[RMDB]
RNA sequence: GGGAACGACUCGAGUAGAGUCGAAAAGAAAGAGCACGUGCCGGGCAGCCACGCACCACGGGGUAAGAGCUGAACGCAUCUAAGCUCGAAACCCACCUGGAAACGAGGAACCACCGAGGCCACUCCUCCCCAUAUAAUUGUUCGCAAUUAUAUGGGGAAAAGAAACAACAACAACAAC
Reactivity to DMS in 0.01 (KOAc 150mM, MgCl2 10mM, bicine 150mM(pH8.5), 24C), signal-to-noise 1, nucleotides 027 to 126: g020a160a080a210g000a030g000c090a030c060g010u000g030c080c030g040g010g000c040a090g000c090c030a040c070g040c070a170c000c020a040c200g060g000g020g000u000a050a250g030a000g080c000u000g000a120a120c160g020c070a030u000c090u000a130a060g030c000u000c000g000a040a040a030c010c010c000a090c030c050u010g000g000a030a150a080c070g000a030g020g000a100a140c020c060a050c020c050g000a070g010g000c010c040a040c030u000c040c000u000
Reactivity to 2A3 in 0.01 (KOAc 150mM, MgCl2 10mM, bicine 150mM(pH8.5), 24C), signal-to-noise 2, nucleotides 027 to 126: g050a020a090a000g030a000g020c050a020c180g030u060g030c050c040g000g040g000c020a020g050c010c010a020c010g050c000a040c040c010a060c040g000g020g000g030u010a020a030g000a000g000c020u030g010a120a020c060g020c090a010u010c030u090a030a000g020c010u000c000g010a030a000a010c010c010c000a060c000c010u050g050g050a110a160a000c040g000a050g070g010a000a010c020c010a000c020c090g000a070g000g000c010c030a010c040u040c000c000u030

Source: RMDB library RFMREP, as collected in RNAgym. The record gives the reactivity of an RNA of 177 nucleotides to DMS and 2A3. DMS adducts were read by reverse transcription with MarathonRT. The 2A3 profile rests on 2,127 reads. In probing experiments dimethyl sulfate is read out at A N1 and C N3, which are open when not base-paired.